The record gives the reactivity of an RNA of 207 nucleotides to 2A3 and DMS. For 2A3, 1,901 sequencing reads were counted. The reactions ran in a buffer of 150 mM KOAc, 10 mM MgCl2 and 150 mM bicine (pH 8.5), at 24 C.
[RMDB]
RNA sequence: GGGAACGACUCGAGUAGAGUCGAAAACCAUGAGACCGUAACUUUCGUAGUCAUUGAUAAAGGGGCAGGUCUUGCUCUUUUGUCAUUGCGGUUGCCUAGAGGCAUGGUCGUUUACCGCGACUUUCCAAUACGAAGAGGGCCUUCGGGCCCUCUUCAAGGUAUGAUAGAUCUUCGGAUCUAUCAUACCAAAAGAAACAACAACAACAAC
Reactivity to 2A3 in 0.01 (KOAc 150mM, MgCl2 10mM, bicine 150mM(pH8.5), 24C), signal-to-noise 3, nucleotides 027 to 156: c000c000a050u100g080a030g020a070c000c010g020u030a070a020c030u110u150u130c120g010u060a060g100u100c090a090u050u030g000a010u010a010a010a000g010g010g010g020c020a030g090g190u130c130u070u030g010c000u000c000u010u020u000u000g010u000c000a010u000u060g020c020g010g000u000u050g010c010c010u120a110g010a130g110g000c040a060u110g020g000u000c010g000u030u060u090a150c060c020g010c000g010a010c000u070u100u050c050c030a070a090u060a130c090g010a010a000g000a010g000g000g040c000c010u020u040c100g050g000g020c030c000c000u000c000u000u010c000a000a000
Reactivity to DMS in 0.01 (KOAc 150mM, MgCl2 10mM, bicine 150mM(pH8.5), 24C), signal-to-noise 1, nucleotides 027 to 156: c010c020a080u010g000a170g010a060c030c000g000u000a070a130c090u000u000u010c090g030u010a060g000u000c080a190u000u000g000a040u000a010a020a000g040g000g010g060c000a040g010g040u000c180u010u000g060c010u000c000u010u000u010u010g020u010c020a010u000u000g030c030g030g080u010u000g000c020c040u000a080g010a130g000g000c030a090u000g010g040u000c000g010u000u010u000a060c180c110g030c030g040a110c060u010u000u000c020c020a090a180u010a090c150g000a020a020g000a020g020g030g000c010c010u000u010c300g070g010g020c000c000c000u000c010u000u000c000a010a060